[RMDB]
RNA sequence: GGGAACGACUCGAGUAGAGUCGAAAAACGGGCAGUUUUCAGACCGCAGAGUCUUGUCAAGGAGGUUCAGCCUUGACCUUACUUCUCUGUGAGGAAUCUACUCAGAAAAACUGCUUGCGCACUAGUAGUUACAAGGGUUGUCACUUAGUACUUACAAGUGUAUGCUUCUAUUCGUAGAAGCAUACACAAAAGAAACAACAACAACAAC
Reactivity to DMS in 0.01 (KOAc 150mM, MgCl2 10mM, bicine 150mM(pH8.5), 24C), signal-to-noise 2, nucleotides 027 to 156: a080c040g020g010g010c030a070g020u030u020u010u000c020a160g020a070c010c010g030c140a130g000a100g020u010c140u000u000g010u000c030a000a010g020g010a120g010g010u010u000c230a210g030c000c000u000u010g000a020c000c170u020u010a030c040u000u000c180u000c040u010g030u010g030a150g000g000a100a100u010c050u000a090c060u010c060a170g000a050a060a020a020a020c010u010g010c000u000u000g020c020g030c080a160c030u010a100g020u000a040g010u000u010a030c030a040a100g000g010g000u020u000g010u000c050a060c050u000u020a060g020u000a040c050u000u010a070c120a050a270
Reactivity to 2A3 in 0.01 (KOAc 150mM, MgCl2 10mM, bicine 150mM(pH8.5), 24C), signal-to-noise 4, nucleotides 027 to 156: a000c010g000g010g000c000a010g000u020u010u010u040c040a040g010a050c010c000g000c010a000g000a010g010u000c060u110u070g000u010c020a010a000g020g020a010g100g160u270u280c100a050g040c000c000u000u010g000a000c000c000u050u060a040c020u080u070c000u000c000u010g040u030g060a200g060g070a060a070u020c010u070a120c070u060c190a060g170a070a050a010a010a010c010u010g000c000u000u030g020c090g000c040a030c030u060a020g040u030a000g020u130u100a070c030a070a070g070g020g030u080u040g050u100c020a030c040u050u030a030g010u050a090c010u090u060a050c090a270a100

The data come from the RNA Mapping Database (RMDB), library OK3TST. An RNA of 207 nucleotides, treated with DMS and 2A3 and read out base by base. High DMS reactivity at an A or C suggests that its Watson-Crick edge is free. The 2A3 profile rests on 2,385 reads. For DMS, 3,209 sequencing reads were counted. Conditions: 150 mM KOAc, 10 mM MgCl2 and 150 mM bicine (pH 8.5), 24 C.